[RMDB]
RNA sequence: GGGAACGACUCGAGUAGAGUCGAAAAGUCGAGAUUGGUUUUAUUGACCGAUUUACUGGUGCCGUGGUGUUUACCGGCGAUGUUUCCGCGGUGGAAUACGCAUUGAAACAGGUGAUUCACACCUUGGGGGCAUGAAUUAGUUCGCUAAUUCAUGCCCAAAAGAAACAACAACAACAAC
Reactivity to 2A3 in 0.01 (KOAc 150mM, MgCl2 10mM, bicine 150mM(pH8.5), 24C), signal-to-noise 1, nucleotides 027 to 126: g100u060c060g060a010g010a090u020u060g000g120u100u000u040u170a260u180u300g050a030c000c010g000a000u010u040u060a130c090u100g160g000u070g000c000c020g090u150g080g000u040g070u020u220u030a030c030c000g010g000c070g010a100u030g040u010u030u000c020c000g010c010g090g000u080g030g090a140a010u090a150c030g000c110a060u000u180g100a080a080a050c020a050g110g030u030g010a110u190u150c150a070c000a040c150c090u000u050g150g010
Reactivity to DMS in 0.01 (KOAc 150mM, MgCl2 10mM, bicine 150mM(pH8.5), 24C), signal-to-noise 2, nucleotides 027 to 126: g030u000c070g010a110g000a030u010u000g030g010u000u010u010u000a160u020u080g000a040c030c010g020a020u000u010u000a060c100u000g020g030u010g020c030c050g000u000g020g000u010g020u000u030u000a060c040c040g010g010c030g000a070u000g000u010u010u000c010c170g040c100g000g000u000g000g000a090a030u000a080c070g030c020a100u030u000g000a060a010a110c130a080g000g040u000g000a160u000u000c140a120c010a040c060c010u010u010g010g000
This 177-nucleotide RNA was probed chemically with 2A3 and DMS. The 2A3 profile rests on 788 reads. The data come from the RNA Mapping Database (RMDB), library OK2TST. The RNA was probed in 150 mM KOAc, 10 mM MgCl2 and 150 mM bicine (pH 8.5) at 24 C.